[RMDB]
RNA sequence: GGGAACGACUCGAGUAGAGUCGAAAAGAUAUGGAAUUCGCAUGUGUGACCCACGCGUCGAACUACUAUACUUCGUCGGAAACGACGAAGUACAUGACGACGUGCACACAUGCGAAUUCCUAAGUCACUAUCCUUCGCAGUUCGCUGCGAAGGAUAGAAAAGAAACAACAACAACAAC
Reactivity to DMS in 0.01 (KOAc 150mM, MgCl2 10mM, bicine 150mM(pH8.5), 24C), signal-to-noise 1, nucleotides 027 to 126: g000a040u000a300u010g000g020a000a030u010u000c000g010c010a030u000g030u020g010u010g020a060c130c060c160a300c100g000c000g030u010c000g000a070a170c160u000a080c080u010a120u000a000c000u000u000c030g040u030c000g000g040a080a120a300c000g010a000c020g000a000a030g000u000a000c090a040u000g020a160c000g000a020c020g020u000g010c040a020c000a000c000a000u000g000c030g000a020a000u000u000c000c000u010a020a060g020u000c020a300
The record gives the reactivity of an RNA of 177 nucleotides to DMS. Values are in units of 0.01, from 0 to 300, in steps of 10.